RNA sequence: GGGAACGACUCGAGUAGAGUCGAAAAUCUAAGAGCGUAACACACACUCAGACUGUACGACAGUCUGACACACACAUACGCUACUGUAUCGUGUGUGUGAUAUCGAUGUAGCACGAAAAUGAAAGAACUAAUCAUAGCGGUUCGCCGCUAUGAUUAGAAAAGAAACAACAACAACAAC
Reactivity to 2A3 in 0.01 (KOAc 150mM, MgCl2 10mM, bicine 150mM(pH8.5), 24C), signal-to-noise 5, nucleotides 027 to 126: u050c040u060a110a000g030a020g130c050g040u090a110a020c020a000c000a000c000a020c110u020c010a000g000a000c010u030g030u160a120c120g190a070c220a000g010u000c000u000g010a000c000a000c000a000c000a000c000a040u030a010c030g080c120u140a130c080u160g030u030a030u060c120g010u010g010u000g000u000g000u000g050a040u030a030u170c080g030a070u050g030u030a000g050c040a020c080g080a100a070a010a050u240g080a120a080a060g060a070a030
Reactivity to DMS in 0.01 (KOAc 150mM, MgCl2 10mM, bicine 150mM(pH8.5), 24C), signal-to-noise 5, nucleotides 027 to 126: u000c050u000a060a130g000a090g030c040g010u010a080a160c090a060c070a080c080a100c160u010c000a010g010a000c000u000g010u000a120c290g000a140c030a010g020u000c000u000g010a030c100a030c040a020c030a020c010a030u010a000c010g010c130u020a070c170u000g010u000a020u000c120g010u000g010u000g010u000g000u000g020a100u010a050u000c100g010a070u000g000u000a060g040c110a110c060g010a030a030a050a080u010g020a060a080a110g010a070a130